[RMDB]
RNA sequence: GGGAACGACUCGAGUAGAGUCGAAAAGUUAUGCUCUCGCUGCCUAAUGGCGGUGCGGGAAACCCACUCUAAAGUCCUUAGGGUUAGCACCUUAAGGCGGGGUUCGGAGGCACCUGGCAACAGAAGCUGAAACUGUGCACAUUCGUGUGCACAGUAACCCACAUAAUUGCUUCGGCAAUUAUGUGGGAAAAGAAACAACAACAACAAC
Reactivity to 2A3 in 0.01 (KOAc 150mM, MgCl2 10mM, bicine 150mM(pH8.5), 24C), signal-to-noise 2, nucleotides 027 to 156: g060u090u080a150u300g020c030u020c020u030c030g000c010u040g010c010c000u290a300a120u280g030g000c040g060g040u090g000c000g040g000g040a020a020a010c020c050c020a040c000u300c060u180a160a130a300g300u060c000c000u000u000a020g060g000g000u060u020a030g000c130a040c010c020u010u000a010a000g000g000c020g000g010g000g000u050u240c160g050g040a060g020g000c000a000c000c000u040g250g000c000a020a010c000a010g010a000a000g000c000u000g000a040a000a000c000u000g000u000g000c000a000c000a010u050u110c130g110u040g010u000g010c000a000c000a000g000u000a000a000
This 207-nucleotide RNA was probed chemically with 2A3.
Values cover nucleotides 27 to 156.
The RNA was probed in 150 mM KOAc, 10 mM MgCl2 and 150 mM bicine (pH 8.5) at 24 C.
Reactivities are rounded to 0.1 and cut off at 0 and 3.
It was measured as part of the RMDB library M2RFPK.